An RNA of 177 nucleotides, treated with 2A3 and DMS and read out base by base.

RNA sequence: GGGAACGACUCGAGUAGAGUCGAAAAUCUGUAUCCUCAGCGUCUUCUUUUGCAGUAAGGAGAUAAUUUUCUGCACCACUAGCAUCAUGCAAUUCAUAAGAAAAUUGUGAAGCAGCUAGCAAGAGGCCCUGCCAUAUGAUUUCGAUCAUAUGGCAGGAAAAGAAACAACAACAACAAC
Reactivity to 2A3 in 0.01 (KOAc 150mM, MgCl2 10mM, bicine 150mM(pH8.5), 24C), signal-to-noise 2, nucleotides 027 to 126: u080c030u060g250u160a080u050c000c030u060c060a130g100c070g100u010c020u020u050c020u190u150u180u300g070c020a010g000u050a000a020g020g030a040g030a000u140a080a230u140u150u080u050c070u070g020c000a080c010c010a010c010u040a000g010c020a030u070c020a110u190g010c000a090a180u100u030c030a070u050a100a040g100a110a280a090a100u070u100g000u010g010a000a020g030c040a020g000c030u030a030g000c040a060a080g020a140g070g110c010
Reactivity to DMS in 0.01 (KOAc 150mM, MgCl2 10mM, bicine 150mM(pH8.5), 24C), signal-to-noise 1, nucleotides 027 to 126: u040c040u010g000u000a160u000c030c010u010c240a020g030c160g000u010c000u030u010c050u000u000u000u050g020c100a020g010u000a040a040g010g010a040g000a020u010a050a070u020u000u010u000c050u010g000c020a060c050c040a220c020u020a010g000c020a060u000c070a180u010g010c010a030a130u000u000c040a010u020a080a050g000a090a030a100a120u000u010g010u000g000a040a110g010c050a040g010c030u000a020g030c060a070a060g010a100g000g000c130
The data come from the RNA Mapping Database (RMDB), library OK2TRN. High DMS reactivity at an A or C suggests that its Watson-Crick edge is free. The DMS profile rests on 873 reads. Conditions: 150 mM KOAc, 10 mM MgCl2 and 150 mM bicine (pH 8.5), 24 C.